[RMDB]
RNA sequence: GGGAACGACUCGAGUAGAGUCGAAAAUCAUAGACUAGCAUCCCACUGCAAUGACCUUUUACCUGCCCGUACUUAGUUAAAUCCUUCCAGUACAUGAUGCCAGACUUCUCUCACUAUUGAAAUCACAUACUCCCUUGCUCAGAGUCAUAGCUGGAUACAAAAUUAGGUGGUUCGCCACCUAAUUUUGAAAAGAAACAACAACAACAAC
Reactivity to 2A3 in 0.01 (KOAc 150mM, MgCl2 10mM, bicine 150mM(pH8.5), 24C), signal-to-noise 3, nucleotides 027 to 156: u110c030a030u100a080g080a080c060u050a020g060c010a080u050c020c020c020a040c040u040g000c000a010a130u070g080a100c000c020u080u110u070u090a050c030c030u040g020c010c020c010g060u030a070c020u090u090a050g090u060u090a040a040a060u040c010c010u050u020c020c000a000g010u030a050c030a110u090g010a020u040g090c010c000a050g030a080c030u070u020c020u050c000u050c030a030c030u090a110u070u190g080a060a060a050u100c030a030c020a070u100a060c020u020c010c000c000u000u040g000c010u000c040a020g020a010g100u040c010a030u050a030g020c010u010g010g020a020u060a110
Reactivity to DMS in 0.01 (KOAc 150mM, MgCl2 10mM, bicine 150mM(pH8.5), 24C), signal-to-noise 3, nucleotides 027 to 156: u010c030a120u000a130g020a150c040u000a100g030c040a120u000c010c020c000a160c100u000g000c060a080a120u000g000a100c050c010u000u000u000u000a090c050c010u000g000c020c020c020g020u000a050c070u000u000a120g030u000u000a050a090a080u000c040c020u000u010c020c000a120g000u000a060c050a090u000g020a080u000g000c020c030a090g030a080c020u000u000c020u000c040u000c040a090c100u000a110u000u000g020a060a070a050u000c030a060c060a180u010a090c050u000c000c000c030u010u020g000c030u000c070a170g010a100g030u000c030a070u000a090g020c020u000g000g020a110u000a160
Conditions: 150 mM KOAc, 10 mM MgCl2 and 150 mM bicine (pH 8.5), 24 C. Chemical mapping of a 207-nucleotide RNA with 2A3 and DMS. It was measured as part of the RMDB library OK3TST. The DMS profile rests on 5,186 reads. Reactivities are given for positions 27 through 156. High DMS reactivity at an A or C suggests that its Watson-Crick edge is free.